[RMDB]
RNA sequence: GGGAACGACUCGAGUAGAGUCGAAAAGAGCAUGUCUUCGGACAUGCUCAAACCAGAAACGGCAAAUAAGCCGAUCCCAGGCGAUCGUACGCCAUACUCGAAAAAGUAUAGUCUUCGGACUAUACAACAUUUCUUCCAAGUUCGCUUGGAAGAAAUGAAAAGAAACAACAACAACAAC
Reactivity to DMS in 0.01 (KOAc 150mM, MgCl2 10mM, bicine 150mM(pH8.5), 24C), signal-to-noise 3, nucleotides 027 to 126: g010a010g010c010a000u000g000u020c000u000u010c160g040g000a030c010a000u000g000c010u000c000a000a060a090c110c100a150g010a080a090a160c020g000g010c020a080a090a140u000a100a130g000c000c000g020a080u000c010c030c020a150g000g010c000g000a100u000c220g010u010a100c010g020c010c010a100u000a030c150u010c030g010a070a040a100a130a100g010u000a000u000a000g000u000c010u000u010c160g010g000a000c000u000a010u010a010c000a050a110
Reactivity to 2A3 in 0.01 (KOAc 150mM, MgCl2 10mM, bicine 150mM(pH8.5), 24C), signal-to-noise 5, nucleotides 027 to 126: g000a000g000c000a010u000g000u010c020u040u070c270g050g000a000c000a000u000g000c000u010c000a000a010a000c030c000a010g080a040a120a010c010g000g010c050a060a100a300u210a300a050g000c000c000g000a010u000c010c000c010a020g000g000c020g030a070u130c070g080u130a070c010g000c000c030a110u080a100c070u050c100g070a110a070a000a020a030g000u000a010u000a000g010u000c000u010u050c230g060g000a000c000u000a000u000a000c000a000a000
Chemical mapping of a 177-nucleotide RNA with DMS and 2A3. For 2A3 the reverse transcriptase was SuperScript II with manganese. Conditions: 150 mM KOAc, 10 mM MgCl2 and 150 mM bicine (pH 8.5), 24 C. Reactivities are rounded to 0.1 and cut off at 0 and 3. The data come from the RNA Mapping Database (RMDB), library M2PK50. For DMS, 2,509 sequencing reads were counted. As a SHAPE reagent, 2A3 marks flexible, mostly unpaired nucleotides at the ribose 2'-OH.